[RMDB]
RNA sequence: GGGAACGACUCGAGUAGAGUCGAAAACAGCGGAGGGGCGACUGCGGUAACAACGUCGUCUUGAGCGUCCGUGCGGAGGGUCAAGCAGGCUGUGCUAUUGAGCUCCGAAAUCACCACUCUCGCGUGCAAGGGCGAAUGAGUUCGCUCAUUCGCCCUUAAAAGAAACAACAACAACAAC
Reactivity to 2A3 in 0.01 (KOAc 150mM, MgCl2 10mM, bicine 150mM(pH8.5), 24C), signal-to-noise 1, nucleotides 027 to 126: c030a000g000c000g030g090a030g000g030g000g000c000g030a000c000u000g000c080g040g190u080a110a040c000a000a000c060g010u000c000g000u000c000u020u000g000a010g030c010g120u000c030c030g020u000g040c030g010g000a010g000g000g010u030c020a020a000g030c000a000g290g170c050u150g080u050g130c000u010a130u050u030g000a020g020c000u010c040c000g020a100a100a000u070c000a010c000c000a070c000u040c020u080c010g000c000g020u080g030c010
Reactivity to DMS in 0.01 (KOAc 150mM, MgCl2 10mM, bicine 150mM(pH8.5), 24C), signal-to-noise 2, nucleotides 027 to 126: c070a170g000c040g050g000a020g000g070g080g020c000g000a000c040u020g020c300g000g050u070a080a070c050a150a300c150g020u000c000g020u000c040u000u000g000a270g000c000g000u020c080c050g050u000g000c120g000g000a040g000g010g010u000c080a070a090g000c010a060g000g000c090u050g000u000g070c020u000a120u010u020g010a140g010c130u000c020c020g000a040a090a130u020c070a150c050c060a000c050u000c000u010c000g000c040g000u000g020c150

Structure probing data (2A3 and DMS) for a 177-nucleotide construct. 2A3 adducts were read by reverse transcription with SuperScript II with manganese.